RNA sequence: GGGAACGACUCGAGUAGAGUCGAAAACUAGUCAAUGGUGUACAUUAUCCAACUGGAAGUUGCCUGAUAGCCUUCUUAGUUAUCCUCAUAAUACUUUGGUUUGUAGAUAGAAUUCGUUUCUGUCUCAGAUAUGUAGAACCUUCGGGUUCUACAUAUCAAAAGAAACAACAACAACAAC
Reactivity to DMS in 0.01 (KOAc 150mM, MgCl2 10mM, bicine 150mM(pH8.5), 24C), signal-to-noise 5, nucleotides 027 to 126: c010u010a070g010u010c090a070a070u000g000g020u000g020u000a070c110a080u000u000a060u000c050c050a070a050c050u000g000g010a060a070g010u010u000g010c030c040u000g020a080u000a180g000c010c020u000u000c030u000u010a050g010u000u020a060u000c040c050u000c130a070u000a080a070u010a060c100u000u000u000g010g010u010u000u000g020u010a020g020a030u000a020g010a030a030u010u010c160g020u000u000u000c010u000g010u000c010u000c070a130
Reactivity to 2A3 in 0.01 (KOAc 150mM, MgCl2 10mM, bicine 150mM(pH8.5), 24C), signal-to-noise 4, nucleotides 027 to 126: c030u030a050g080u100c090a070a080u090g030g020u070g070u090a110c050a070u060u170a040u120c030c030a060a100c060u030g060g020a060a040g060u120u100g040c020c010u100g030a070u110a060g010c010c010u010u050c000u070u090a040g020u020u060a050u100c000c030u060c060a050u090a270a060u080a210c040u100u070u110g080g040u120u120u140g080u070a010g000a010u010a020g000a030a040u000u050c090g050u010u040u000c000u000g030u000c000u020c020a000